[RMDB]
RNA sequence: GGGAACGACUCGAGUAGAGUCGAAAAAAUAAGAGUUUGGAUUAACCUAUAGGGAAUUAGCGAUCAAGAAUACAACCUAAGGACCUGGUUGACUUAUUUAUUCCAUAGGUUGGUGGAAGCUAGCGAAAACUGGAGAUAACUUCGGUUAUCUCCAGUUAAAAGAAACAACAACAACAAC
Reactivity to DMS in 0.01 (KOAc 150mM, MgCl2 10mM, bicine 150mM(pH8.5), 24C), signal-to-noise 1, nucleotides 027 to 126: a010a050u010a030a050g000a090g000u010u030u000g020g030a090u000u010a030a020c020c010u000a060u000a200g010g000g010a070a080u020u000a010g000c050g030a080u000c000a040a070g010a100a110u010a090c070a010a070c060c060u000a040a070g010g020a160c170c020u000g020g020u000u000g010a090c060u010u000a020u000u000u000a110u010u000c020c000a060u000a020g000g010u000u010g020g030u000g010g020a030a100g020c020u000a060g030c100g000a030a040
Chemical mapping of a 177-nucleotide RNA with DMS. The reactions ran in a buffer of 150 mM KOAc, 10 mM MgCl2 and 150 mM bicine (pH 8.5), at 24 C.